[RMDB]
RNA sequence: GGGAACGACUCGAGUAGAGUCGAAAAUGACGAUCACGUUGCUUCUGGUGAACGCGGGCAGGGAUCCGUAGAUGCAGAAAGCGGCGCUGGCCAGGUAGCCUCUCGGCUUGCCCAGCAACUCUUCCACCAUAGUCAGCCUGUUCGCAGGCUGACUAUGAAAAGAAACAACAACAACAAC
Reactivity to 2A3 in 0.01 (KOAc 150mM, MgCl2 10mM, bicine 150mM(pH8.5), 24C), signal-to-noise 1, nucleotides 027 to 126: u110g030a010c070g050a060u110c030a000c100g050u010u030g000c000u030u020c030u060g100g060u110g080a130a060c060g000c030g010g000g000c040a130g040g180g000a120u030c000c040g010u050a020g020a070u110g040c000a010g040a080a080a000g060c050g020g000c020g000c100u020g060g000c020c010a020g050g000u020a020g020c000c010u040c000u030c070g000g010c010u010u080g000c020c020c000a020g020c000a020a050c020u050c050u090u020c040c030a070c010
Reactivity to DMS in 0.01 (KOAc 150mM, MgCl2 10mM, bicine 150mM(pH8.5), 24C), signal-to-noise 2, nucleotides 027 to 126: u020g030a120c090g010a150u000c110a060c060g020u000u010g020c050u000u000c030u000g000g020u010g030a110a140c220g020c060g000g000g020c020a100g000g010g010a060u000c030c010g010u000a090g010a130u000g000c050a080g010a040a070a080g000c010g010g010c040g030c100u010g000g010c020c040a060g000g000u000a080g010c030c040u000c070u000c090g000g010c040u010u010g010c120c000c020a050g010c050a080a110c080u000c030u010u000c030c040a190c140
An RNA of 177 nucleotides, treated with 2A3 and DMS and read out base by base. DMS adducts were read by reverse transcription with MarathonRT. The reactions ran in a buffer of 150 mM KOAc, 10 mM MgCl2 and 150 mM bicine (pH 8.5), at 24 C. The 2A3 profile rests on 2,120 reads.